An RNA of 207 nucleotides, treated with 2A3 and read out base by base. It was measured as part of the RMDB library OK3TST. For 2A3 the reverse transcriptase was SuperScript II with manganese. The 2A3 profile rests on 4,493 reads. Reactivities are given for positions 27 through 156.
RNA sequence: GGGAACGACUCGAGUAGAGUCGAAAACGAUCAGUACGUUCGCGUACUGAUCGAAGCUACUGGAGACAGUAGCAUGGCUCCGACAUUGGCUGGCCGUGUCAAUGGAAAGGCACACAUGUGCAGAGUGUGUCGCGGAGCCCACGGCCAUCUGCACACGGUGAAGCUGAAGAUUCGUCUUCAGCUUCACAAAAGAAACAACAACAACAAC
Reactivity to 2A3 in 0.01 (KOAc 150mM, MgCl2 10mM, bicine 150mM(pH8.5), 24C), signal-to-noise 3, nucleotides 027 to 156: c010g000a010u000c000a010g010u000a000c010g010u030u090c200g000c000g130u000a010c000u050g000a000u000c000g010a010a010g000c010u000a000c000u000g010g010a050g020a040c000a000g000u000a000g000c000a010u010g000g000c000u000c000c000g000a010c010a000u010u000g010g000c020u050g150g170c130c090g150u130g000u020c010a000a010u000g030g060a130a110a190g010g000c000a000c000a000c010a000u240g010u000g000c000a000g000a000g000u000g000u000g000u000c000g010c000g020g000a000g000c000c000c000a100c030g090g000c050c030a120u010c010u010g000c000a010c010a000c050g080